[RMDB]
RNA sequence: GGGAACGACUCGAGUAGAGUCGAAAACUUUGGUGAGGCCCUAUCUAGUAUAGCAAUCCACCAAGCAGGUGAAUUCACACAAUUCAGGUUCUCAGAGAAAAUGCGCCCUGACUUGACAGGUAUGGUCCGAGUCAUGAGGGUUCGCCCUCAUGACUCGAAAAGAAACAACAACAACAAC
Reactivity to DMS in 0.01 (KOAc 150mM, MgCl2 10mM, bicine 150mM(pH8.5), 24C), signal-to-noise 1, nucleotides 027 to 126: c010u010u030u010g000g000u010g000a090g000g010c170c300c000u030a050u000c060u090a050g020u030a050u020a050g000c100a090a080u060c030c000a030c000c040a000a080g020c240a040g000g080u000g040a170a060u040u000c110a110c230a110c070a030a050u000u030c070a000g000g000u000u000c010u000c020a020g000a100g030a020a060a080a070u030g010c000g000c300c000c000u010g010a040c100u000u000g000a080c020a020g010g020u020a000u000g010g020u000c010
Reactivity to 2A3 in 0.01 (KOAc 150mM, MgCl2 10mM, bicine 150mM(pH8.5), 24C), signal-to-noise 2, nucleotides 027 to 126: c040u040u030u110g010g010u050g000a010g050g000c030c000c010u000a050u020c010u050a050g090u070a030u020a080g080c020a030a090u000c020c000a020c000c000a060a000g160c140a110g040g090u100g010a100a060u090u000c020a000c020a000c000a030a060u020u070c020a030g110g010u210u040c020u020c030a050g070a020g070a020a070a080a010u160g000c040g050c020c000c010u000g000a040c040u010u020g010a010c030a020g110g000u120a020u150g000g000u000c000

Chemical mapping of a 177-nucleotide RNA with DMS and 2A3. Reactivities are given for positions 27 through 126. The RNA was probed in 150 mM KOAc, 10 mM MgCl2 and 150 mM bicine (pH 8.5) at 24 C. For DMS the reverse transcriptase was MarathonRT. The data come from the RNA Mapping Database (RMDB), library OK1LIB.